Structure probing data (DMS and 2A3) for a 177-nucleotide construct. The reactions ran in a buffer of 150 mM KOAc, 10 mM MgCl2 and 150 mM bicine (pH 8.5), at 24 C. For DMS, 1,744 sequencing reads were counted. DMS (dimethyl sulfate) methylates the pairing face of unpaired adenines and cytosines. The data come from the RNA Mapping Database (RMDB), library TTRDEL.
RNA sequence: GGGAACGACUCGAGUAGAGUCGAAAAGAUAUGGAUUGUUGUAGACAUGACUCAAGUCGGAAACGACGAAGGUCAACAGCUACACCAAUCCUAAGUCAAAAGAUGCGAGACUUCGGUCUCGCAUCAACAGUUUACUAAGCUUCGGCUUAGUAAACUGAAAAGAAACAACAACAACAAC
Reactivity to DMS in 0.01 (KOAc 150mM, MgCl2 10mM, bicine 150mM(pH8.5), 24C), signal-to-noise 2, nucleotides 027 to 126: g000a010u010a140u030g000g000a020u000u000g020u000u000g000u010a010g000a040c130a180u010g020a040c000u010c030a050a300g000u000c000g000g020a020a020a040c000g000a020c000g010a140a240g000g000u010c010a040a060c270a170g000c010u000a010c000a010c050c000a000a000u000c000c000u010a010a080g000u010c020a080a070a140a180g010a010u000g000c000g000a010g010a050c010u010u010c220g020g010u000c010u000c000g020c000a000u000c000a020a130
Reactivity to 2A3 in 0.01 (KOAc 150mM, MgCl2 10mM, bicine 150mM(pH8.5), 24C), signal-to-noise 2, nucleotides 027 to 126: g010a010u020a010u080g000g000a000u010u000g010u020u030g000u000a000g030a070c160a300u200g010a000c010u030c250a080a000g000u000c020g010g070a020a010a000c010g000a000c030g050a090a020g020g030u010c010a040a060c130a080g000c000u010a010c010a000c030c000a010a010u000c000c000u000a010a000g010u000c020a020a000a090a230g000a000u000g010c020g000a010g000a020c000u100u230c300g030g010u000c020u010c010g000c000a000u000c000a000a000